[RMDB]
RNA sequence: GGGAACGACUCGAGUAGAGUCGAAAAUCUAUUCACCCACUGAACAUUAAAUGAACCAAUCAACUCUGCAAGAAACAUAUGUAGUGCAAUAUUCACUUGUCUAAGUUACUGACAUCAUGCAGUGGAAUACUAGUACCGUCUUCGGACGGUACUAGUAAAAAGAAACAACAACAACAAC
Reactivity to DMS in 0.01 (KOAc 150mM, MgCl2 10mM, bicine 150mM(pH8.5), 24C), signal-to-noise 2, nucleotides 027 to 126: u000c050u030a070u010u040c060a210c070c000c000a010c010u000g010a130a140c070a080u000u010a010a060a040u000g000a120a140c080c100a040a040u010c140a030a100c010u000c050u050g030c040a030a030g000a040a150a060c090a070u000a060u020g000u000a120g000u000g020c160a040a050u000a050u000u000c130a110c050u000u000g000u010c030u000a030a000g010u010u030a100c100u020g010a080c110a020u000c100a060u010g000c030a030g020u010g000g000a050a070
Reactivity to 2A3 in 0.01 (KOAc 150mM, MgCl2 10mM, bicine 150mM(pH8.5), 24C), signal-to-noise 1, nucleotides 027 to 126: u000c000u010a090u050u170c040a010c040c020c000a010c040u050g040a050a040c060a140u160u170a000a090a050u040g020a010a040c000c020a000a050u090c020a010a000c020u000c010u060g000c040a010a030g040a130a100a010c060a020u250a050u150g070u110a060g060u070g130c000a050a050u020a010u180u090c020a010c010u000u090g040u040c010u000a050a050g040u060u160a060c060u030g050a040c000a030u000c000a010u130g040c000a000g000u020g010g080a060a030